Source information: The record gives the reactivity of an RNA of 177 nucleotides to DMS and 2A3. Conditions: 150 mM KOAc, 10 mM MgCl2 and 150 mM bicine (pH 8.5), 24 C. For DMS the reverse transcriptase was MarathonRT. The data come from the RNA Mapping Database (RMDB), library OK2TRN.
RNA sequence: GGGAACGACUCGAGUAGAGUCGAAAAGCUGUGGUCAGCAGAGGGAAGGUGCUGGGGUGAGGCAGGAAGAACUGGCACAGCUCUAGGGCUCACCGGGGACCAACGAGGUGGCUCCCUGCAGAUACCAACGUGUGGAUAUGUUCGCAUAUCCACACGUAAAAGAAACAACAACAACAAC
Reactivity to DMS in 0.01 (KOAc 150mM, MgCl2 10mM, bicine 150mM(pH8.5), 24C), signal-to-noise 2, nucleotides 027 to 126: g010c020u000g050u000g000g030u000c020a050g030c010a080g000a140g000g000g000a120a110g000g000u000g030c090u010g000g000g000g020u010g000a040g020g010c040a080g000g010a170a070g000a090a120c010u000g000g010c040a030c060a080g010c010u000c070u000a120g020g000g010c060u000c020a040c080c060g010g000g000g000a080c040c090a030a080c140g000a130g000g010u010g000g000c110u000c030c020c040u000g020c060a040g020a100u000a100c030c020a080
Reactivity to 2A3 in 0.01 (KOAc 150mM, MgCl2 10mM, bicine 150mM(pH8.5), 24C), signal-to-noise 1, nucleotides 027 to 126: g000c010u020g020u080g090g050u070c030a000g030c050a020g090a070g040g030g050a080a150g020g030u160g030c100u100g010g050g010g000u060g090a080g080g000c090a070g060g030a060a080g040a140a050c020u010g080g000c010a010c010a070g020c000u030c010u040a060g000g000g060c030u050c010a000c030c000g020g020g020g050a030c000c000a010a050c080g050a070g050g050u040g010g000c030u020c010c000c000u030g000c020a060g020a100u130a090c010c030a060